[RMDB]
RNA sequence: GGGAACGACUCGAGUAGAGUCGAAAAGAUGAUUAGUUCGCUAAUCAUCAAAGAACGCUGCAACGCGCAGAGAGCGCGCGAGAGCGUGAAUGCGCGAAGAAAAAAGUUACGGGUUCGCCCGUAACAACAGUAAUUGCAGGUUCGCCUGCAAUUACUGAAAAGAAACAACAACAACAAC
Reactivity to 2A3 in 0.01 (KOAc 150mM, MgCl2 10mM, bicine 150mM(pH8.5), 24C), signal-to-noise 2, nucleotides 027 to 126: g000a000u000g000a020u020u000a000g040u010u060c130g010c120u000a010a000u010c000a000u010c010a000a000a040g020a080a010c050g020c140u180g010c070a120a040c000g000c000g000c020a000g050a000g030a010g110c010g030c010g030c140g290a070g030a030g070c000g000u000g010a050a030u040g020c000g000c010g030a100a070g140a100a150a000a010a000a010g000u000u010a000c000g020g000g000u030u050c250g020c020c000c000g000u000a000a000c000a000a010
Reactivity to DMS in 0.01 (KOAc 150mM, MgCl2 10mM, bicine 150mM(pH8.5), 24C), signal-to-noise 2, nucleotides 027 to 126: g010a000u000g000a000u000u000a020g020u000u050c230g040c020u000a020a000u000c000a000u000c000a030a080a130g000a160a090c080g010c070u000g010c040a070a100c000g000c010g020c010a050g020a130g010a300g010c000g000c000g000c090g000a130g000a100g000c000g000u000g000a070a100u000g020c040g000c050g000a080a090g030a020a070a050a040a070a070g030u000u000a010c000g000g000g010u000u030c280g010c000c000c000g000u000a060a000c000a030a050
The record gives the reactivity of an RNA of 177 nucleotides to 2A3 and DMS. Conditions: 150 mM KOAc, 10 mM MgCl2 and 150 mM bicine (pH 8.5), 24 C. For 2A3, 3,195 sequencing reads were counted. The DMS profile rests on 1,650 reads. It was measured as part of the RMDB library M2PK50.